This 207-nucleotide RNA was probed chemically with DMS and 2A3. It was measured as part of the RMDB library OK3TST. For DMS, 2,060 sequencing reads were counted.
RNA sequence: GGGAACGACUCGAGUAGAGUCGAAAAGGGGAGUGGAGCCUCCUGGGCGACUGAGAGAGUGAAGAGAUGUUAUGGGGGGAUGAACCCAAUCCUCUCUGAUACUCUUCGAUGGGUAUUAGUAGAGACUUGAAAUUGCUUUUUGACUAAGUAAUAAUGACUUGUUAAAUGCAUUCGUGCAUUUAACAAGAAAAGAAACAACAACAACAAC
Reactivity to DMS in 0.01 (KOAc 150mM, MgCl2 10mM, bicine 150mM(pH8.5), 24C), signal-to-noise 1, nucleotides 027 to 156: g000g000g020g000a140g030u010g030g000a050g030c010c000u000c040c020u030g010g020g000c030g000a090c070u010g000a030g010a120g000a120g000u030g000a050a020g020a060g020a090u010g000u020u000a080u000g000g020g010g000g090g000a040u010g010a100a200c060c030c010a100a090u000c050c010u010c000u000c000u000g020a060u000a020c020u000c000u010u000c150g010a130u010g010g010g010u000a050u010u000a110g010u000a050g040a090g010a110c080u010u000g030a040a130a060u000u020g000c010u000u000u000u000u010g010a210c100u000a050a180g020u010a040a150u000a070a130u010g000a290
Reactivity to 2A3 in 0.01 (KOAc 150mM, MgCl2 10mM, bicine 150mM(pH8.5), 24C), signal-to-noise 2, nucleotides 027 to 156: g030g010g010g000a050g050u100g000g030a030g020c020c020u000c040c060u070g030g030g010c050g000a030c030u130g020a040g000a010g000a000g060u070g030a050a010g010a000g020a080u080g020u160u090a140u220g030g000g000g000g010g000a010u010g050a020a040c000c000c000a010a050u020c000c020u000c010u000c000u000g000a010u000a020c010u030c000u080u120c080g060a100u110g000g000g010u030a040u070u060a070g050u070a020g030a000g030a060c060u110u080g030a070a060a080u030u010g020c000u040u060u080u100u080g010a030c050u010a050a010g000u030a040a080u130a100a090u150g060a060